RNA sequence: GGGAACGACUCGAGUAGAGUCGAAAAUGCAUGCACAGAGGCAGGCCCUGGCUCUUGCAGCAGCGGACUUCACGAAUGUGGAAUGUGGAGGUUACACAGCGAUGCCUAGACUGUCUGUCCUUAGACCGAAGGGCAGCAGAAAGGCUCAGGGGGCUUGGUGUACCGUGCUAUUCGUAGCACGGUACACAAAAGAAACAACAACAACAAC
Reactivity to 2A3 in 0.01 (KOAc 150mM, MgCl2 10mM, bicine 150mM(pH8.5), 24C), signal-to-noise 1, nucleotides 027 to 156: u050g000c050a050u000g010c010a100c040a070g030a000g090g000c040a070g120g180c000c000c110u020g130g050c030u000c000u000u020g050c020a080g000c030a000g020c020g000g000a030c000u000u000c010a010c040g000a030a060u170g010u170g130g050a100a060u050g020u010g010g040a050g040g160u040u180a130c090a030c020a010g080c090g050a010u120g000c010c010u100a090g030a100c010u050g060u300c020u000g000u000c010c000u060u110a060g020a050c060c090g060a000a000g000g000g000c000a000g000c000a000g020a000a050a000g050g010c000u000c020a020g000g000g010g010g000c040u010u150g050